[RMDB]
RNA sequence: GGGAACGACUCGAGUAGAGUCGAAAAGAUAUGGAUCAUAUGGAGAGCAACAGCUCGGAAACGAGACAUGCUCCCAUGAUGAUCCUAAGUCAAAAUCAGCUGUUUCACUUCGGUGAAACAGCUGAAACGUCAUAUUCCCGUUCGCGGGAAUAUGACGAAAAGAAACAACAACAACAAC
Reactivity to DMS in 0.01 (KOAc 150mM, MgCl2 10mM, bicine 150mM(pH8.5), 24C), signal-to-noise 1, nucleotides 027 to 126: g020a040u000a300u020g010g000a000u000c000a000u000a030u000g010g010a180g000a020g070c010a020a070c170a140g000c000u010c000g000g030a040a060a170c010g000a010g020a040c100a170u010g010c010u000c000c010c000a010u000g040a020u000g010a010u000c000c000u020a010a060g000u000c010a080a050a080a130u010c000a010g020c000u000g000u010u010u000c000a000c000u000u020c200g000g000u000g000a000a000a010c000a000g010c000u000g000a000a000a050
Reactivity to 2A3 in 0.01 (KOAc 150mM, MgCl2 10mM, bicine 150mM(pH8.5), 24C), signal-to-noise 1, nucleotides 027 to 126: g050a010u120a050u160g020g010a000u000c020a000u040a000u030g080g000a300g000a000g300c000a000a170c050a190g000c020u040c030g000g000a040a040a030c010g000a000g110a050c020a020u060g000c020u000c000c000c000a030u110g050a000u000g000a000u010c000c000u000a060a000g040u060c060a000a000a090a300u020c000a000g000c000u000g030u000u010u020c000a000c020u020u150c260g110g000u000g020a000a000a000c000a000g000c020u000g020a000a000a000